The record gives the reactivity of an RNA of 207 nucleotides to 2A3 and DMS. High 2A3 reactivity points to a flexible backbone, as in loops and unpaired stretches.
[RMDB]
RNA sequence: GGGAACGACUCGAGUAGAGUCGAAAAAAUCCUAUUCGUAGGAUUCUAGUAACCUUUGUGCUGCGAGGUCGAACUACGCUCGGGAGAGACCCAUUGGGUCUUCGAGCGCGACUACCCACCGCAGCACUCUGGUCCGUUGUAUAGCUUCGGCUAUAAACGACGAUAUAAGUUUCGACUUAUAUCGUCGAAAAGAAACAACAACAACAAC
Reactivity to 2A3 in 0.01 (KOAc 150mM, MgCl2 10mM, bicine 150mM(pH8.5), 24C), signal-to-noise 2, nucleotides 027 to 156: a000a030u030c020c000u040a030u020u110c300g040u010a010g000g010a010u120u000c060u110a180g070u150a090a120c000c000u000u000u000g010u010g000c000u010g010c000g010a020g000g000u000c010g030a140a040c110u070a060c170g030c010u020c020g040g110g010a230g030a020g010a060c000c000c100a300u230u300g000g000g000u000c010u110u190c020g010a000g000c020g000c010g000a010c000u050a080c000c030c060a090c020c000g000c000a000g010c010a000c010u010c000u000g010g010u000c000c000g050u020u030g060u000a040u020a000g010c000u070u050c220g140g010c060u090a000u100a100a120a000
Reactivity to DMS in 0.01 (KOAc 150mM, MgCl2 10mM, bicine 150mM(pH8.5), 24C), signal-to-noise 1, nucleotides 027 to 156: a010a000u000c000c010u020a050u000u000c240g050u010a000g020g000a040u000u000c050u000a120g020u020a060a020c000c010u000u010u000g050u000g010c000u000g000c000g020a100g020g000u000c010g010a130a260c020u000a020c000g000c010u000c000g000g050g020a300g000a050g000a040c020c000c000a300u000u030g040g040g000u000c000u000u000c020g020a010g010c000g000c000g000a060c060u000a050c010c000c000a300c080c000g000c000a000g010c000a010c000u020c010u000g000g000u000c040c110g000u000u020g010u020a070u000a040g000c010u000u000c250g020g010c050u000a080u000a060a090a240